[RMDB]
RNA sequence: GGGAACGACUCGAGUAGAGUCGAAAAGCAGCGCGGCGUCGCGGAAUUCAGCAUUGUGCUGGCGCUCGGUCGCCCCGAGCUGAUGACCGAAUUACCUGUAACCGUGCGCGGUUACAAACGGGUCAUACAGUAUGACAGGGUUCGCCCUGUCAUACUGAAAAGAAACAACAACAACAAC
Reactivity to DMS in 0.01 (KOAc 150mM, MgCl2 10mM, bicine 150mM(pH8.5), 24C), signal-to-noise 3, nucleotides 027 to 126: g010c030a040g010c040g030c250g020g000c040g040u000c060g000c030g000g000a090a120u000u000c040a030g030c030a270u020u010g020u010g040c010u000g000g020c300g010c030u000c010g000g000u000c040g010c080c020c020c020g000a090g040c030u000g000a040u010g000a040c000c000g030a130a090u000u000a090c160c070u000g010u000a010a010c000c000g040u000g020c160g020c010g020g010u000u000a010c000a000a070a060c140g010g000g000u000c030a030u000a190
Reactivity to 2A3 in 0.01 (KOAc 150mM, MgCl2 10mM, bicine 150mM(pH8.5), 24C), signal-to-noise 2, nucleotides 027 to 126: g040c030a030g100c000g000c030g060g020c020g030u050c040g000c050g200g080a040a080u140u070c020a010g020c010a060u050u300g160u170g070c010u030g010g000c030g000c000u040c030g000g020u060c010g010c010c010c000c000g020a040g000c030u060g030a020u030g000a020c000c010g010a070a080u140u040a110c010c020u000g000u000a000a000c010c000g010u020g040c210g010c010g070g010u000u020a000c010a010a060a010c050g040g000g020u010c000a010u050a100